[RMDB]
Structure probing data (DMS and 2A3) for a 207-nucleotide construct. For DMS, 2,333 sequencing reads were counted.
RNA sequence: GGGAACGACUCGAGUAGAGUCGAAAAGGGUUUGAGCCAUCGCCCGAAUAUGAUGGUUGAUACAAGUCGACAUUGUACGCGACGUAGUACGUACUCAUUAGUGCGAAAGCACGGUUAGUCCGACUAGGCAGGGACGAUCUUCUGUCAAUACUUAGAAGAGCGUCGUAAUAUUCGUAUUACGACGCUCAAAAGAAACAACAACAACAAC
Reactivity to DMS in 0.01 (KOAc 150mM, MgCl2 10mM, bicine 150mM(pH8.5), 24C), signal-to-noise 2, nucleotides 027 to 156: g040g010g030u000u000u000g030a050g020c050c070a090u000c040g060c040c040c070g040a110a080u000a030u000g010a040u000g000g010u000u010g040a150u000a040c130a080a160g010u000c020g010a050c030a080u000u000g000u000a050c020g000c000g030a060c080g030u010a120g030u000a060c020g020u000a040c020u010c080a100u000u020a270g000u000g010c000g000a210a100a270g050c010a030c000g030g010u000u000a050g010u000c050c000g020a220c040u000a030g010g060c060a140g020g000g010a050c040g020a120u000c070u010u020c070u010g000u010c040a110a120u040a070c080u000u000a040g000a210a170
Reactivity to 2A3 in 0.01 (KOAc 150mM, MgCl2 10mM, bicine 150mM(pH8.5), 24C), signal-to-noise 2, nucleotides 027 to 156: g000g010g010u020u030u080g040a000g000c000c000a010u030c020g030c020c010c010g080a050a110u270a110u080g020a000u010g000g000u050u060g020a030u070a150c120a170a000g020u020c010g010a060c060a120u030u140g140u190a060c110g010c040g020a000c040g010u000a010g000u020a060c020g020u000a010c000u000c040a040u060u020a130g000u010g010c000g040a080a020a000g000c010a000c000g010g010u010u020a000g000u010c090c010g000a020c020u030a020g010g010c020a010g000g030g020a000c080g060a070u000c020u070u000c030u010g070u010c000a100a150u130a170c060u100u150a070g040a160a000